[RMDB]
RNA sequence: GGGAACGACUCGAGUAGAGUCGAAAAGCAUUGAAAACAACAGUGCAGAAUUUCGCAGUAAAACAGAUACCUAUAUCAGUUACUUAAUAGGUAAUCGUAGCAAAGAUACCUUGUCUGACUGGUUACAGACUCACCAAUGGUUCGCCAUUGGUGAGUCAAAAGAAACAACAACAACAAC
Reactivity to DMS in 0.01 (KOAc 150mM, MgCl2 10mM, bicine 150mM(pH8.5), 24C), signal-to-noise 1, nucleotides 027 to 126: g000c000a010u000u030g000a100a150a170a170c180a130a170c020a010g020u000g030c030a090g020a060a100u000u000u000c060g010c100a000g010u000a050a030a060a100c050a090g000a080u020a090c160c050u010a060u000a040u000c020a070g000u000u000a050c100u010u040a000a020u000a030g010g000u000a010a050u000c000g000u010a120g000c210a140a090a100g000a020u000a020c020c030u000u000g030u000c090u010g030a030c080u000g010g000u010u020a070c150a110
Reactivity to 2A3 in 0.01 (KOAc 150mM, MgCl2 10mM, bicine 150mM(pH8.5), 24C), signal-to-noise 1, nucleotides 027 to 126: g000c000a030u020u050g060a100a170a120a060c100a090a000c010a010g000u000g050c000a020g130a120a190u100u090u080c130g000c090a030g090u180a060a050a070a050c020a040g020a050u040a130c000c040u030a040u020a000u230c040a040g050u060u040a000c020u020u250a120a080u020a130g020g000u000a070a100u020c040g020u120a090g000c050a090a080a000g000a020u010a010c000c050u020u060g090u040c030u010g020a020c000u020g000g090u030u050a040c040a050

Chemical mapping of a 177-nucleotide RNA with DMS and 2A3. For DMS, 636 sequencing reads were counted. It was measured as part of the RMDB library OK2TST. 2A3 adducts were read by reverse transcription with SuperScript II with manganese. The reactions ran in a buffer of 150 mM KOAc, 10 mM MgCl2 and 150 mM bicine (pH 8.5), at 24 C.